[RMDB]
RNA sequence: GGGAACGACUCGAGUAGAGUCGAAAACAGGUUGAUAUUCCUGUACCACCUCUUUACCGUUUGAGCAAUGGGGGGACGCAGGAGGAUAGGGUAAGCGCGCUGUUGGAUAUGCGCGUCCAAGCAGUUAGAUAACGAGAGAUUUCGAUCUCUCGUUAUCAAAAGAAACAACAACAACAAC
Reactivity to DMS in 0.01 (KOAc 150mM, MgCl2 10mM, bicine 150mM(pH8.5), 24C), signal-to-noise 8, nucleotides 027 to 126: c060a070g000g010u000u000g010a110u010a150u000u000c000c000u000g010u000a130c050c030a160c020c010u000c020u000u000u000a060c070c020g010u000u000u020g010a130g040c060a040a040u000g010g000g010g000g000g020a090c120g020c040a020g000g000a040g000g000a110u000a090g010g010g010u000a090a160g010c030g000c030g010c000u000g000u000u010g010g010a170u000a080u000g000c030g010c020g010u000c040c030a060a080g010c100a070g000u000u010a120
Reactivity to 2A3 in 0.01 (KOAc 150mM, MgCl2 10mM, bicine 150mM(pH8.5), 24C), signal-to-noise 4, nucleotides 027 to 126: c010a010g050g070u110u100g140a110u070a090u170u060c010c000u000g000u020a040c000c020a170c010c020u000c020u090u080u080a110c030c050g160u040u080u260g230a200g010c090a100a080u080g030g010g000g000g000g030a030c060g010c030a010g000g020a010g030g030a060u120a080g040g000g030u060a060a010g000c000g000c000g000c020u030g070u200u090g080g010a050u030a020u210g030c040g000c000g000u000c000c000a010a010g000c010a000g010u030u140a040
An RNA of 177 nucleotides, treated with DMS and 2A3 and read out base by base.
DMS adducts were read by reverse transcription with MarathonRT.
Source: RMDB library OK2TRN, as collected in RNAgym.
The reactions ran in a buffer of 150 mM KOAc, 10 mM MgCl2 and 150 mM bicine (pH 8.5), at 24 C.
In probing experiments dimethyl sulfate is read out at A N1 and C N3, which are open when not base-paired.